[RMDB]
RNA sequence: GGGAACGACUCGAGUAGAGUCGAAAAGGCGCCUCCACCCGAGCAGCUGACAAUGCGAGAUCUCGUUUUUACGAGUUCUCAUUCCGUGCGACGGACUUUGUCGAGCUGCUCCGGCGGGGGCGAAACAAAUCCUAUUAUGCUUCGGCAUAAUAGGAUUAAAAGAAACAACAACAACAAC
Reactivity to DMS in 0.01 (KOAc 150mM, MgCl2 10mM, bicine 150mM(pH8.5), 24C), signal-to-noise 4, nucleotides 027 to 126: g010g010c010g010c000c000u000c000c000a050c000c000c210g000a010g000c000a000g020c000u010g010a020c000a000a000u000g000c130g010a010g000a010u010c000u000c000g020u000u030u020u010u040a010c000g010a020g000u000u000c000u000c010a110u020u000c000c000g010u000g020c240g000a130c010g010g000a090c020u000u000u000g000u000c000g000a020g020c000u000g010c000u000c000c230g000g020c060g010g000g000g000g010c000g000a010a020a040c100a090
Reactivity to 2A3 in 0.01 (KOAc 150mM, MgCl2 10mM, bicine 150mM(pH8.5), 24C), signal-to-noise 9, nucleotides 027 to 126: g060g010c010g000c000c000u010c000c000a030c000c010c000g010a000g000c000a000g000c000u000g000a000c000a010a020u050g050c110g030a000g000a010u010c000u000c010g020u000u030u060u140u300a010c000g000a000g000u010u000c000u000c000a010u060u010c000c010g050u100g250c140g170a150c010g050g000a000c000u010u010u000g000u010c030g050a010g000c000u000g000c000u000c000c000g000g000c000g000g000g000g000g000c000g000a000a000a000c010a000
Chemical mapping of a 177-nucleotide RNA with DMS and 2A3. Conditions: 150 mM KOAc, 10 mM MgCl2 and 150 mM bicine (pH 8.5), 24 C. 2A3 adducts were read by reverse transcription with SuperScript II with manganese. Reactivities are rounded to 0.1 and cut off at 0 and 3. It was measured as part of the RMDB libraries RFM100 and RFMREP.